[RMDB]
RNA sequence: GGGAACGACUCGAGUAGAGUCGAAAAGAAAGAAAGAAAGAAGCCGGCUCUGCUAGUCUCACGGCAACCACGUUGAAAUUACAACGAAAGAAGCUCGCACUCAACUUCAACGGCUUAACGAGUGCAAAAAAGAAGUAUCACUUCGGUGAUACUUCAACCUUCAAAUGUUCUUCGGAACAUUUGAAGGAAAAGAAACAACAACAACAAC
Reactivity to 2A3 in 0.01 (KOAc 150mM, MgCl2 10mM, bicine 150mM(pH8.5), 24C), signal-to-noise 1, nucleotides 027 to 156: g060a040a080a000g040a070a100a000g070a020a300a040g100a040a010g140c120c000g040g000c080u030c070u070g010c050u040a030g000u000c010u040c030a050c030g070g000c020a010a150c030c010a030c000g000u020u000g060a050a060a130u300u190a190c020a070a000c010g060a000a030a100g000a020a000g000c100u190c210g020c060a000c000u000c000a010a070c050u050u000c010a040a090c050g000g000c020u050u020a050a000c030g000a000g010u000g000c000a000a000a000a090a000a090g000a000a000g000u000a000u000c000a000c010u030u020c080g020g010u000g000a000u000a000c000u000u010c000a000a000
An RNA of 207 nucleotides, treated with 2A3 and read out base by base. 2A3 adducts were read by reverse transcription with SuperScript II with manganese. The RNA was probed in 150 mM KOAc, 10 mM MgCl2 and 150 mM bicine (pH 8.5) at 24 C. Reactivities are rounded to 0.1 and cut off at 0 and 3. The 2A3 profile rests on 728 reads.